Structure probing data (DMS and 2A3) for a 177-nucleotide construct. The 2A3 profile rests on 4,079 reads.
RNA sequence: GGGAACGACUCGAGUAGAGUCGAAAAAUAAGUCCUUUCGAGGACUUAUAAUGCUGCCCAAAGAGGACCUGGCGGUGUCUGGGCUGCUAAACUCAUCAGCCGUGGCUUUGGGGUUCGCCCCAAAGAACGAACCUUUCUAUUUCGAUAGAAAGGUUCGAAAAGAAACAACAACAACAAC
Reactivity to DMS in 0.01 (KOAc 150mM, MgCl2 10mM, bicine 150mM(pH8.5), 24C), signal-to-noise 4, nucleotides 027 to 126: a020u000a010a020g020u000c000c000u000u010u010c160g020a030g010g000a010c000u000u000a000u000a070a100u000g020c070u000g010c010c000c010a060a110a140g020a170g010g000a030c010c040u000g020g000c030g020g020u000g000u010c040u010g010g010g010c000u000g000c080u000a040a070a100c070u010c050a070u010c070a080g010c020c020g010u010g010g010c020u000u000u000g010g010g010g010u000u000c220g000c010c000c000c010a000a000a000g010a070a140
Reactivity to 2A3 in 0.01 (KOAc 150mM, MgCl2 10mM, bicine 150mM(pH8.5), 24C), signal-to-noise 1, nucleotides 027 to 126: a000u010a000a000g000u030c010c000u050u020u050c160g140a020g000g000a000c000u010u000a010u010a010a020u090g020c030u040g030c000c000c010a070a170a030g200a040g060g020a010c010c020u020g060g010c020g020g000u030g010u020c050u080g000g020g000c000u020g030c020u090a100a100a100c040u020c040a100u030c030a060g030c020c020g030u040g090g020c000u010u010u000g010g000g000g020u010u040c160g110c010c000c000c030a000a010a000g000a010a010
Source information:
The DMS profile rests on 4,053 reads. Reactivities are given for positions 27 through 126. For DMS the reverse transcriptase was MarathonRT.